[RMDB]
RNA sequence: GGGAACGACUCGAGUAGAGUCGAAAAGGAACUGCUGGUUUCCCCUUAUGUCCAGUCCCUCUCCCGUCCUGGUGAAGGGAGAUUCCGGAACGUUUAGCAUUUGAGGGACAAAGCCGCCCCCGGGCGCACGCAGGGUGCUUCGGCACCCUGAAAAGAAACAACAACAACAAC
Reactivity to DMS in 0.01 (KOAc 150mM, MgCl2 10mM, bicine 150mM(pH8.5), 24C), signal-to-noise 5, nucleotides 027 to 129: g040g030a060a040c110u020g010c070u020g000g000u000u000u000c010c000c040c080u010u050a110u010g000u030c050c190a100g000u010c030c020c020u010c040u010c000c030c000g020u020c010c010u060g050g040u060g000a100a050g000g050g020a040g010a000u050u040c090c090g010g030a030a050c090g010u030u080u030a110g030c120a060u050u040u070g040a030g020g020g020a080c150a030a070a020g000c050c050g050c000c050c040c010c080g000g000g000c100g040c100a040c030g020
Reactivity to 2A3 in 0.01 (KOAc 150mM, MgCl2 10mM, bicine 150mM(pH8.5), 24C), signal-to-noise 6, nucleotides 027 to 129: g080g000a070a030c060u040g020c020u050g070g050u080u050u040c010c000c000c000u110u090a080u150g090u040c010c010a010g020u010c000c000c020u000c000u000c000c000c000g050u050c020c000u100g110g000u220g110a060a030g030g040g000a020g010a020u080u010c040c010g030g030a090a030c030g020u070u100u150a060g030c060a110u010u020u150g140a150g000g000g000a010c050a000a100a010g020c000c020g020c000c000c000c000c010g020g030g000c020g000c010a030c010g030